[RMDB]
Structure probing data (DMS and 2A3) for a 170-nucleotide construct. DMS adducts were read by reverse transcription with MarathonRT. The RNA was probed in 150 mM KOAc, 10 mM MgCl2 and 150 mM bicine (pH 8.5) at 24 C. The DMS profile rests on 69,205 reads.

RNA sequence: GGGAACGACUCGAGUAGAGUCGAAAACGAGAAAUCCACUCAUGGGUCCAUCGUCCAUCUCCUUCUUACCUUUUGGCCGGCAUGGUCCCAGCCUCCUCGCUGGCGCCGGCUGGGCAACAUUCCGAAGUUCGUACUACGUUCGCGUAGUACAAAAGAAACAACAACAACAAC
Reactivity to DMS in 0.01 (KOAc 150mM, MgCl2 10mM, bicine 150mM(pH8.5), 24C), signal-to-noise 9, nucleotides 027 to 129: c070g000a070g030a150a090a080u030c000c010a050c150u030c070a060u040g000g000g000u000c050c020a090u010c040g010u000c040c030a120u030c090u030c030c000u040u030c040u030u010a060c060c030u040u020u020u020g000g000c000c000g030g060c020a070u000g050g000u030c210c000c010a050g010c020c070u040c080c040u020c090g030c010u010g030g030c210g050c010c000g000g030c030u000g010g000g050c080a030a030c150a080u000u060c020c000g040a050a080g000u050u050c110
Reactivity to 2A3 in 0.01 (KOAc 150mM, MgCl2 10mM, bicine 150mM(pH8.5), 24C), signal-to-noise 9, nucleotides 027 to 129: c030g010a020g050a040a070a010u020c020c010a040c080u140c070a170u130g020g000g020u020c030c020a070u060c020g030u010c020c010a080u030c030u020c030c000u050u040c000u050u090a140c030c000u060u050u050u080g100g030c000c000g020g000c040a080u130g040g020u090c030c000c000a020g020c000c020u100c020c000u060c050g020c030u040g020g000c040g020c010c000g020g010c000u010g000g000g000c010a060a030c020a130u130u040c030c020g050a080a020g080u100u130c050